An RNA of 177 nucleotides, treated with DMS and 2A3 and read out base by base.
For DMS, 5,441 sequencing reads were counted.
Source: RMDB library RFMREP, as collected in RNAgym.
Reactivities are rounded to 0.1 and cut off at 0 and 3.
DMS adducts were read by reverse transcription with MarathonRT.
For 2A3 the reverse transcriptase was SuperScript II with manganese.
The 2A3 profile rests on 3,888 reads.
[RMDB]
RNA sequence: GGGAACGACUCGAGUAGAGUCGAAAAAAGCCUCAGAGAUUUGGUAGAUGCUUAAUGAUGUAGAGGUUGCGAUGAAUUUUGGAUUGUUCUCUCAAGUUAGCAGGCAGGUCACUUUUCUCUUUUACGACUCAUUGAUUAUGUUCGCAUAAUCAAUGAGAAAAGAAACAACAACAACAAC
Reactivity to DMS in 0.01 (KOAc 150mM, MgCl2 10mM, bicine 150mM(pH8.5), 24C), signal-to-noise 4, nucleotides 027 to 126: a110a100g010c030c020u010c110a080g010a120g000a080u000u000u010g010g010u000a060g010a110u010g000c040u000u000a070a080u000g010a100u000g010u000a120g010a060g010g000u000u000g020c040g010a100u000g010a090a120u010u000u000u000g010g020a070u000u010g020u010u000c040u000c020u000c060a050a160g010u000u010a050g020c100a040g000g000c020a050g010g000u000c050a030c070u000u000u000u010c040u000c020u000u000u000u000a130c180g020a240
Reactivity to 2A3 in 0.01 (KOAc 150mM, MgCl2 10mM, bicine 150mM(pH8.5), 24C), signal-to-noise 3, nucleotides 027 to 126: a000a010g050c020c000u020c020a010g020a000g000a100u080u120u140g030g010u040a050g020a090u080g020c010u050u100a070a010u130g070a040u110g060u100a030g010a030g080g020u070u050g010c010g040a070u060g060a080a190u120u090u110u140g090g020a030u000u040g010u060u020c030u000c000u000c030a020a030g020u020u020a000g020c020a000g070g000c010a010g000g070u030c020a020c030u090u020u070u000c020u000c000u030u080u050u050a090c070g060a070